Chemical mapping of a 177-nucleotide RNA with DMS and 2A3. Values cover nucleotides 27 to 126. The 2A3 profile rests on 14,302 reads. For 2A3 the reverse transcriptase was SuperScript II with manganese.
[RMDB]
RNA sequence: GGGAACGACUCGAGUAGAGUCGAAAAGAUAUGGACGUAGAGGACAUGCUGUCUCGGAAACGAGCAGCAACAGCCUUCAUACGUCCUAAGUCAAACGUCUACCAAUUCUUCGGAAUUGGUAGACGAAGUUCUUGAUCUAGUUCGCUAGAUCAAGAACAAAAGAAACAACAACAACAAC
Reactivity to DMS in 0.01 (KOAc 150mM, MgCl2 10mM, bicine 150mM(pH8.5), 24C), signal-to-noise 4, nucleotides 027 to 126: g000a040u000a270u010g000g000a000c010g000u000a020g010a020g020g020a020c040a160u000g000c000u010g010u010c010u010c000g000g010a050a070a170c010g000a020g000c000a010g000c000a000a030c240a140g000c020c010u000u000c050a110u000a010c010g010u000c000c010u000a010a050g000u010c040a090a090a250c010g000u010c000u000a000c000c000a000a000u000u000c000u000u000c210g030g000a010a000u000u000g000g010u000a000g000a000c000g010a000a060
Reactivity to 2A3 in 0.01 (KOAc 150mM, MgCl2 10mM, bicine 150mM(pH8.5), 24C), signal-to-noise 4, nucleotides 027 to 126: g020a020u050a020u100g010g000a000c000g000u000a000g010a010g020g030a060c020a140u030g000c010u040g100u300c010u000c030g020g020a040a050a030c010g000a000g010c000a000g020c010a010a000c030a010g060c000c000u050u040c090a140u020a040c010g000u000c000c000u000a040a010g020u020c030a140a040a070c030g000u000c000u000a010c000c000a000a000u010u000c010u040u080c300g090g010a000a000u000u010g000g000u000a000g000a000c000g010a000a000